RNA sequence: GGGAACGACUCGAGUAGAGUCGAAAAAUGGUGAAUGGUAUCGCCGCGGCUUUUACGACAAUGGCAGGCCGCUCGGCUCGAAAAACAGCGAUGAAUGCCAGAUCGACGCCAUUGCCCAGUCGUGGAACUAAAUACCUCGUUUCGACGAGGUAUUUAGAAAAGAAACAACAACAACAAC
Reactivity to DMS in 0.01 (KOAc 150mM, MgCl2 10mM, bicine 150mM(pH8.5), 24C), signal-to-noise 6, nucleotides 027 to 126: a050u000g000g010u000g000a110a090u000g010g010u010a050u000c060g030c020c000g010c010g020g010c050u000u000u000u000a080c100g010a070c090a060a100u000g010g010c060a110g030g030c140c060g020c090u000c120g020g020c030u000c050g000a030a050a030a060a080c120a090g000c060g010a070u010g010a080a060u010g000c000c010a080g010a090u000c120g010a170c040g000c010c000a020u000u000g010c010c010c070a120g010u000c100g030u000g010g010a100a140
Reactivity to 2A3 in 0.01 (KOAc 150mM, MgCl2 10mM, bicine 150mM(pH8.5), 24C), signal-to-noise 4, nucleotides 027 to 126: a010u110g010g020u060g060a160a090u070g030g020u080a030u100c020g010c020c000g000c000g000g000c000u060u110u130u220a100c080g030a030c060a110a050u070g040g030c020a020g020g070c040c010g020c070u040c060g040g010c010u020c050g060a110a020a000a010a020c040a010g020c020g070a030u080g110a150a090u110g020c000c000a040g000a110u090c060g050a040c030g020c000c000a010u020u020g000c000c020c010a000g040u020c030g030u060g070g030a060a040
Source: RMDB library OK2TST, as collected in RNAgym. An RNA of 177 nucleotides, treated with DMS and 2A3 and read out base by base. Conditions: 150 mM KOAc, 10 mM MgCl2 and 150 mM bicine (pH 8.5), 24 C. 2A3 adducts were read by reverse transcription with SuperScript II with manganese. For DMS, 7,124 sequencing reads were counted. For 2A3, 5,262 sequencing reads were counted.